RNA sequence: GGGAACGACUCGAGUAGAGUCGAAAAGAUAUGGAUGUGUAGAUUUCAAUCCGAUAGGGAGCGUGACAUCGGAAACGAUGUUGAACGCAUCGAUCUAUACGGAUUGAAAUCUACACAUCCUAAGUCACAUAUGGGAUCACUUCGGUGAUCCCAUAUGAAAAGAAACAACAACAACAAC
Reactivity to DMS in 0.01 (KOAc 150mM, MgCl2 10mM, bicine 150mM(pH8.5), 24C), signal-to-noise 2, nucleotides 027 to 126: g030a040u000a300u000g020g000a010u000g000u000g030u000a000g000a020u000u000u000c010a000a010u000c000c000g020a060u000a000g030g000g010a000g020c010g000u020g000a050c000a010u000c010g030g000a130a130a200c010g000a010u000g010u010u010g010a150a030c010g030c000a300u010c210g010a030u010c000u000a000u000a180c000g000g000a020u000u000g010a000a010a000u000c000u000a000c000a000c010a000u000c000c000u000a000a020g010u000c020a220

Structure probing data (DMS) for a 177-nucleotide construct. For DMS the reverse transcriptase was MarathonRT. Reactivities are rounded to 0.1 and cut off at 0 and 3.